[RMDB]
RNA sequence: GGGAACGACUCGAGUAGAGUCGAAAAUUUAUUUCUUGUGGUGCAUUUUCAUACAUAAAUGUGUAACCCGAAAUAGUAAAGCUUUUUCCUUCACUAUUUUGUGUUUCUGCAAAAGCUGUGCUACUCACGUAGCGGAGGAGUUCGCUCCUCCGCUACGAAAAGAAACAACAACAACAAC
Reactivity to 2A3 in 0.01 (KOAc 150mM, MgCl2 10mM, bicine 150mM(pH8.5), 24C), signal-to-noise 2, nucleotides 027 to 126: u080u130u020a050u050u050u030c080u040u090g030u140g000g020u000g050c000a020u000u040u040u180c080a070u120a210c030a050u130a210a060a050u050g050u000g020u020a060a110c000c000c020g000a000a000a000u080a030g050u050a000a050a050g050c120u060u070u020u170u120c010c000u020u090c030a010c070u050a150u040u080u050u020g030u000g040u020u010u020c050u040g020c030a120a020a000a000g070c070u090g020u040g090c010u010a020c000u000c000a050